[RMDB]
Source information
This 207-nucleotide RNA was probed chemically with 2A3. High 2A3 reactivity points to a flexible backbone, as in loops and unpaired stretches. The data come from the RNA Mapping Database (RMDB), library M2RFPK. Conditions: 150 mM KOAc, 10 mM MgCl2 and 150 mM bicine (pH 8.5), 24 C.
RNA sequence: GGGAACGACUCGAGUAGAGUCGAAAAGCCGCGGCAAGUGGAGUUAGCGAGAAGGGACUAGGCUUUGGUUUCUUCAAGUGAAGCGGUCACCAAUCAGGUGUGGUAGUUACCGUAAAAAAUCCGGAUUAAUGCCUCAGCGCGUUCGCGCGCUGAGGAAGACACUUAAACUCUUCGGAGUUUAAGUGUCAAAAGAAACAACAACAACAAC
Reactivity to 2A3 in 0.01 (KOAc 150mM, MgCl2 10mM, bicine 150mM(pH8.5), 24C), signal-to-noise 1, nucleotides 027 to 156: g010c000c000g040c010g060g000c120a120a130g030u100g100g020a040g040u220u080a050g080c050g000a060g010a040a010g000g000g010a000c010u030a040g070g230c060u290u180u130g050g000u050u010u000c020u020u030c000a040a020g020u040g050a060a030g020c000g040g040u020c020a000c030c030a000a080u120c040a060g000g060u040g010u020g150g000u020a030g030u120u090a010c000c020g000u020a000a130a070a000a000a000u070c010c020g030g020a060u100u160a120a130u230g090c000c000u000c000a000g000c000g000c000g000u040u050c090g050c000g010c000g020c060u000g000a000g000g000a000a000